RNA sequence: GGGAACGACUCGAGUAGAGUCGAAAAUCAUGUUUGUUCGCAAACAUGAAAAGAAAGCACGAUAAUAAAAUAAAAGGGAAGGGAACGUGCACCCACCCAUAAAAACGCACGUGUUCGCACGUGCGAAGUAUUGACUUUUCUUCGGAAAAGUCAAUACAAAAGAAACAACAACAACAAC
Reactivity to DMS in 0.01 (KOAc 150mM, MgCl2 10mM, bicine 150mM(pH8.5), 24C), signal-to-noise 1, nucleotides 027 to 126: u010c000a030u000g010u000u000u000g000u000u000c300g060c000a010a010a050c010a020u010g000a020a070a070a110g000a040a070a050g010c020a010c000g000a300u000a070a120u000a040a020a070a080u010a070a050a060a050g020g000g000a200a060g000g000g000a040a060c010g000u000g000c000a300c000c010c000a120c040c000c010a100u000a080a020a030a050a120c000g030c000a000c010g030u000g000u000u000c160g010c000a000c000g020u010g010c010g010a010a000
Reactivity to 2A3 in 0.01 (KOAc 150mM, MgCl2 10mM, bicine 150mM(pH8.5), 24C), signal-to-noise 2, nucleotides 027 to 126: u020c000a000u010g020u000u000u000g030u020u060c140g020c070a000a000a000c010a010u010g000a040a040a000a040g040a050a070a000g000c000a000c050g070a050u110a300a030u130a030a160a020a010u150a070a100a030a030g010g000g010a070a150g020g010g000a000a090c020g000u000g000c000a040c010c010c000a010c000c010c010a020u180a030a080a010a000a010c020g020c000a000c000g010u010g030u020u030c270g030c090a000c000g010u000g000c000g000a000a000